RNA sequence: GGGAACGACUCGAGUAGAGUCGAAAACCCUGGAACUUCGGUUCCAGGGCAUGGUGCAAAUCCCCCGCUGAAACGGAGCGAUAUCCGACCCAAAAAUAUAAAAAGCUGAUGAUUUCGAUCAUCAGAAUCAUAGCCUACAUUUCGAUGUAGGCUAUGAAAAAGAAACAACAACAACAAC
Reactivity to DMS in 0.01 (KOAc 150mM, MgCl2 10mM, bicine 150mM(pH8.5), 24C), signal-to-noise 2, nucleotides 027 to 126: c000c010c010u000g010g010a010a000c000u010u020c200g040g000u000u000c000c010a010g000g020g000c020a020u000g020g030u020g000c250a040a120a100u000c010c010c000c010c010g010c030u010g010a150a090a150c010g010g010a020g020c030g030a020u010a010u000c000c010g030a100c080c060c080a030a100a050a070a100u010a090u010a100a110a080a130a130g000c000u000g000a000u000g000a000u000u000u010c160g000a020u000c000a010u000c000a000g010a060a050
Reactivity to 2A3 in 0.01 (KOAc 150mM, MgCl2 10mM, bicine 150mM(pH8.5), 24C), signal-to-noise 2, nucleotides 027 to 126: c000c000c020u000g000g000a010a000c000u050u120c210g080g000u000u000c000c000a000g000g000g000c010a060u110g050g000u150g070c040a070a130a180u100c030c020c010c010c000g000c030u060g070a060a100a050c010g000g000a010g000c000g000a030u000a030u000c010c030g020a120c020c010c030a060a240a010a090a000u160a030u130a140a160a030a040a000g110c010u010g000a010u000g000a010u040u120u090c190g020a010u010c000a000u010c000a000g030a000a010